[RMDB]
Source information:
This 207-nucleotide RNA was probed chemically with 2A3 and DMS. Conditions: 150 mM KOAc, 10 mM MgCl2 and 150 mM bicine (pH 8.5), 24 C. For DMS, 3,734 sequencing reads were counted. 2A3 is a SHAPE reagent: it acylates the 2'-hydroxyl of flexible nucleotides of all four kinds.
RNA sequence: GGGAACGACUCGAGUAGAGUCGAAAAAUCCUUCACCGUGAUUCAGGCCGAGAGGGAGUCCACUCUCGUAAAUCCAGGCUCAACCAAAAGUAACUGCGAACAACAUCGUUCCUUUCGCUCGUAAGGCUGCUCCUGUAGCUGCUUAAACGCCACAAACCAUAAUUACGGGGUUCGCCCCGUAAUUAUGAAAAGAAACAACAACAACAAC
Reactivity to 2A3 in 0.01 (KOAc 150mM, MgCl2 10mM, bicine 150mM(pH8.5), 24C), signal-to-noise 4, nucleotides 027 to 156: a010u040c030c000u050u080c080a060c050c040g070u060g120a110u110u060c060a030g060g000c030c000g010a010g000a000g000g010g010a010g010u020c020c030a040c010u020c000u010c000g080u100a020a010a020u020c020c000a010g000g000c010u000c010a040a100c060c040a070a030a070a090g060u090a050a070c040u080g020c050g050a040a010c050a030a000c030a220u070c020g010u020u020c000c000u050u130u040c030g030c030u060c020g020u050a050a020g040g000c010u020g000c000u020c060c000u080g060u130a040g000c020u030g000c000u030u060a080a130a000c030g090c070c020a080c060a100a080a040c030
Reactivity to DMS in 0.01 (KOAc 150mM, MgCl2 10mM, bicine 150mM(pH8.5), 24C), signal-to-noise 2, nucleotides 027 to 156: a100u000c040c000u000u000c060a070c040c010g020u000g010a140u010u040c050a120g010g030c160c040g000a050g010a060g000g000g000a100g040u000c090c050a040c000u000c000u000c010g040u000a060a040a090u000c060c040a100g010g010c020u000c040a100a150c060c040a030a020a070a140g010u010a020a070c020u020g000c030g000a010a040c090a130a080c120a070u000c030g010u000u000c000c000u030u000u000c000g020c000u010c000g000u000a100a150g030g030c020u000g020c040u000c020c070u000g020u000a100g040c000u000g010c030u000u020a030a080a050c070g010c040c030a060c080a080a160a160c140